[RMDB]
The record gives the reactivity of an RNA of 177 nucleotides to DMS and 2A3.
RNA sequence: GGGAACGACUCGAGUAGAGUCGAAAAAGCUCAACAAGAGAGCUACAAUACAGGACUAAGGUGCUCGUUGAGUCGAGUUUGGAUCAACUACAUAAUAAAUUAUUGCUAGUGAGAGUCUUCGUCAGCGACCGCAGAAAUGAUUCGUCAUUUCUGCGGUAAAAGAAACAACAACAACAAC
Reactivity to DMS in 0.01 (KOAc 150mM, MgCl2 10mM, bicine 150mM(pH8.5), 24C), signal-to-noise 3, nucleotides 027 to 126: a040g020c020u000c010a060a110c150a120a130g000a160g000a030g010c010u010a050c150a050a110u060a110c180a030g010g000a050c020u010a060a110g000g000u020g000c040u000c030g020u000u010g000a140g010u010c040g020a050g000u000u010u000g010g030a130u010c030a070a050c020u000a060c060a060u010a080a080u010a050a100a060u020u000a040u010u020g010c090u010a040g010u010g000a160g000a070g000u000c010u000u000c030g020u000c070a050g000c110g010
Reactivity to 2A3 in 0.01 (KOAc 150mM, MgCl2 10mM, bicine 150mM(pH8.5), 24C), signal-to-noise 6, nucleotides 027 to 126: a020g010c030u030c010a040a070c090a250a030g130a030g010a000g160c000u020a010c060a000a100u130a090c060a050g090g110a020c040u080a100a040g080g000u040g050c010u010c040g050u020u060g060a060g090u120c020g010a000g020u050u100u110g060g030a060u060c050a070a030c010u050a030c040a050u180a070a050u190a090a260a060u210u150a050u070u130g050c060u020a020g030u020g060a070g000a000g030u030c000u040u060c050g070u010c010a010g020c030g140
DMS adducts were read by reverse transcription with MarathonRT. The reactions ran in a buffer of 150 mM KOAc, 10 mM MgCl2 and 150 mM bicine (pH 8.5), at 24 C. For 2A3 the reverse transcriptase was SuperScript II with manganese.